[RMDB]
RNA sequence: GGGAACGACUCGAGUAGAGUCGAAAACCCGUUGAUAAGGAAUAAGGGCAGGUCACGUUGCUAUUGGUUAUCUAUACCAGUCUGCUUGGUUGCCCGGAGCUAUAAAAAAGUCUCCUUCAACGAAGCACAAAACAAACAGAUUCGUCUGUUUGUUUUGAAAAGAAACAACAACAACAAC
Reactivity to 2A3 in 0.01 (KOAc 150mM, MgCl2 10mM, bicine 150mM(pH8.5), 24C), signal-to-noise 9, nucleotides 027 to 126: c000c000c000g000u010u020g050a110u070a170a050g060g030a070a070u120a090a100g010g000g000c010a020g040g090u110c010a010c040g030u030u020g040c090u050a030u030u020g010g010u060u050a110u180c130u100a070u090a090c000c000a000g010u010c010u010g000c000u020u030g030g020u040u010g000c010c000c010g000g000a000g000c030u050a030u230a150a120a040a020a010a020g070u040c020u000c020c000u020u010c000a010a000c010g070a050a040g070c060a020
Reactivity to DMS in 0.01 (KOAc 150mM, MgCl2 10mM, bicine 150mM(pH8.5), 24C), signal-to-noise 9, nucleotides 027 to 126: c000c000c020g020u000u000g010a090u030a050a030g000g010a080a100u030a120a110g010g000g020c010a040g010g010u010c040a040c100g000u000u000g000c180u020a020u000u010g000g010u010u010a120u040c210u030a080u030a050c010c010a020g010u010c040u000g000c010u000u000g000g010u010u000g010c060c040c050g000g010a070g000c020u010a070u040a010a070a100a110a070a040g000u010c070u000c000c010u010u010c040a020a010c020g000a070a100g010c200a160